[RMDB]
RNA sequence: GGGAACGACUCGAGUAGAGUCGAAAAGAUGGGUCCGAUGGAUUAAUGCGUCGCCGGCCAUUGGAUCCUGAUUGAUAGAUUGAAGGCGACGGUCGGAUCACUCGGUAAUUCGGUGCUCGACGAGUGAUCCGUGAUGAUAGUUAAGACGAGCACCUAACCAGGGAUUACCUUUCGAGGUAAUCCCUGGAAAAGAAACAACAACAACAAC
Reactivity to 2A3 in 0.01 (KOAc 150mM, MgCl2 10mM, bicine 150mM(pH8.5), 24C), signal-to-noise 1, nucleotides 027 to 156: g140a000u150g000g000g050u000c010c020g000a000u000g010g030a090u200u190a080a110u300g040c010g000u000c000g000c000c000g000g000c000c000a000u000u000g000g000a000u020c000c000u000g010a010u000u190g010a030u020a190g030a070u070u290g080a190a010g040g000c000g000a000c020g020g000u040c000g010g000a020u000c000a000c020u000c000g020g010u210a080a140u220u300c110g020g000u000g010c000u000c000g000a010c000g000a000g000u000g000a000u000c000c000g000u000g010a000u060g020a030u060a100g040u180u090a160a000g070a060c050g000a000g010c000a000c000c010u000a040a000